[RMDB]
RNA sequence: GGGAACGACUCGAGUAGAGUCGAAAAGAUAUGGAUGACCUAGACAUGUAAGUCGGAAACGACUUGACAACAGCUAGGUCAUCCUAAGUCAAACUGCGAAUCGUUGGUUCGCCAACGAUUCGCAGAAGACUAUCUUCUACUUCGGUAGAAGAUAGUCAAAAGAAACAACAACAACAAC
Reactivity to DMS in 0.01 (KOAc 150mM, MgCl2 10mM, bicine 150mM(pH8.5), 24C), signal-to-noise 1, nucleotides 027 to 126: g010a040u010a300u000g000g010a010u000g000a000c000c000u000a000g000a150c070a210u010g000u000a050a010g000u000c010g000g000a030a080a130c020g000a020c000u000u000g000a030c020a040a090c290a130g030c000u000a000g000g000u000c000a000u000c000c000u000a020a020g000u000c030a130a150a240c010u000g000c000g030a020a000u010c000g000u010u000g000g000u010u010c300g000c000c000a000a000c000g000a000u010u000c000g000c010a000g000a010a100
Reactivity to 2A3 in 0.01 (KOAc 150mM, MgCl2 10mM, bicine 150mM(pH8.5), 24C), signal-to-noise 1, nucleotides 027 to 126: g000a010u060a020u090g000g000a000u010g000a000c000c000u010a010g070a140c090a100u070g000u010a000a000g000u020c010g020g000a040a030a010c000g030a000c000u010u150g060a000c010a160a030c050a030g040c010u000a000g010g000u000c010a000u000c000c000u000a000a000g010u000c010a000a020a100c010u010g000c050g000a000a010u000c020g000u000u030g020g070u090u160c300g020c100c000a010a010c020g020a000u030u010c000g000c000a000g010a000a030